[RMDB]
RNA sequence: GGGAACGACUCGAGUAGAGUCGAAAACCGCAAGGCAGAGUGGUAGAAGAGCGUUGCAUGCGCGUCGAAGGGCGAUGGCGACUGACCCUGGAGCACAUGCAAGUGAGUAUGCAGACAUGAGUAACGUAUCCUGGUCCUUGUUCGCAAGGACCAGGAUAAAAGAAACAACAACAACAAC
Reactivity to DMS in 0.01 (KOAc 150mM, MgCl2 10mM, bicine 150mM(pH8.5), 24C), signal-to-noise 1, nucleotides 027 to 126: c060c060g010c120a160a060g000g000c040a050g000a170g000u000g030g060u000a010g000a070a070g020a000g000c040g010u000u010g010c000a000u000g010c040g000c000g000u040c270g090a270a090g000g000g090c130g000a130u000g000g000c270g000a080c100u000g030a270c300c050c000u000g030g000a060g000c020a110c000a020u000g050c000a030a030g000u000g020a020g010u000a040u000g000c160a150g070a090c050a050u040g000a040g000u000a000a100c140g000u000
Reactivity to 2A3 in 0.01 (KOAc 150mM, MgCl2 10mM, bicine 150mM(pH8.5), 24C), signal-to-noise 1, nucleotides 027 to 126: c000c000g030c040a020a010g020g020c070a000g050a000g060u020g010g010u160a000g010a090a000g040a020g020c010g030u020u000g010c000a000u060g000c060g000c000g090u190c000g120a090a020g110g010g000c060g030a050u060g000g030c040g110a170c000u020g040a020c000c000c000u020g020g050a000g000c000a020c000a040u030g020c000a010a020g030u000g000a020g080u070a020u140g000c020a000g060a050c000a060u070g040a070g180u020a030a000c020g000u010